[RMDB]
RNA sequence: GGGAACGACUCGAGUAGAGUCGAAAAAGAGUACGGCCGCAAGGUUUCCGGUUGUGGAUGGCAGCGUGAGUGUCGCCCCGUCGUCUAGUGCUGGUUCUAGGGCUGGGGCGUCAGCAUCCAGGUAAAAGCAUAGAUUACAUUUCGAUGUAAUCUAUGCAAAAGAAACAACAACAACAAC
Reactivity to DMS in 0.01 (KOAc 150mM, MgCl2 10mM, bicine 150mM(pH8.5), 24C), signal-to-noise 6, nucleotides 027 to 126: a070g000a120g010u010a070c070g010g000c020c030g010c120a060a080g010g010u000u000u000c040c020g010g010u000u010g020u000g000g000a040u000g000g010c050a080g000c060g000u010g010a100g010u000g010u000c010g000c010c010c000c010g010u000c030g000u010c010u000a020g010u000g010c100u000g000g010u000u000c010u000a030g000g000g000c020u010g040g000g000g010c010g010u000c010a030g010c030a060u000c020c020a070g010g010u010a050a070a080a160
Reactivity to 2A3 in 0.01 (KOAc 150mM, MgCl2 10mM, bicine 150mM(pH8.5), 24C), signal-to-noise 4, nucleotides 027 to 126: a000g080a010g030u080a020c040g010g020c030c010g050c070a040a050g070g010u020u050u060c040c000g040g020u080u100g090u090g040g020a070u040g080g000c040a040g030c050g060u120g080a100g040u070g020u020c010g010c000c000c020c000g030u020c010g040u000c010u010a010g010u020g100c090u120g110g070u130u010c010u010a020g010g030g030c070u120g050g010g000g010c000g000u000c000a000g020c000a000u000c020c010a010g050g050u140a080a070a020a020